Conditions: 150 mM KOAc, 10 mM MgCl2 and 150 mM bicine (pH 8.5), 24 C. The record gives the reactivity of an RNA of 177 nucleotides to DMS and 2A3. For DMS the reverse transcriptase was MarathonRT. For 2A3 the reverse transcriptase was SuperScript II with manganese. For 2A3, 4,299 sequencing reads were counted. Reactivities are given for positions 27 through 126.
RNA sequence: GGGAACGACUCGAGUAGAGUCGAAAAUUUUCAUGUAAUACCUCAAAGCAGACCGUGUUCUGCGAACGAAUAGAUUUGCCUGCCACCGACAAUCAGAUGGUCAGGGACACGGAUAUCCACCAGCUGACACCAUAUGACCUUUCGAGGUCAUAUGGUGAAAAGAAACAACAACAACAAC
Reactivity to DMS in 0.01 (KOAc 150mM, MgCl2 10mM, bicine 150mM(pH8.5), 24C), signal-to-noise 3, nucleotides 027 to 126: u010u000u030u010c060a110u010g010u010a080a060u010a090c050c030u000c020a080a100a110g000c010a030g000a040c010c090g000u010g000u010u000c030u010g010c020g000a030a060c140g000a130a140u010a090g000a080u030u020u030g000c040c040u000g010c020c080a040c040c040g000a100c080a070a070u000c080a030g000a010u000g010g030u010c110a130g010g010g010a040c010a050c010g000g000a290u030a030u000c030c000a090c000c020a050g030c010u000g000a110
Reactivity to 2A3 in 0.01 (KOAc 150mM, MgCl2 10mM, bicine 150mM(pH8.5), 24C), signal-to-noise 5, nucleotides 027 to 126: u070u070u040u100c090a100u150g080u160a130a070u070a150c020c020u070c100a090a060a030g000c020a020g030a060c010c100g190u060g050u230u010c010u020g000c020g010a030a020c030g050a020a030u100a090g130a160u090u110u170g060c000c040u060g040c020c020a070c040c050g100a060c040a060a130u090c000a030g060a130u040g010g030u070c100a060g030g030g000a010c020a000c030g040g000a030u030a040u120c020c010a020c010c000a010g020c000u000g020a010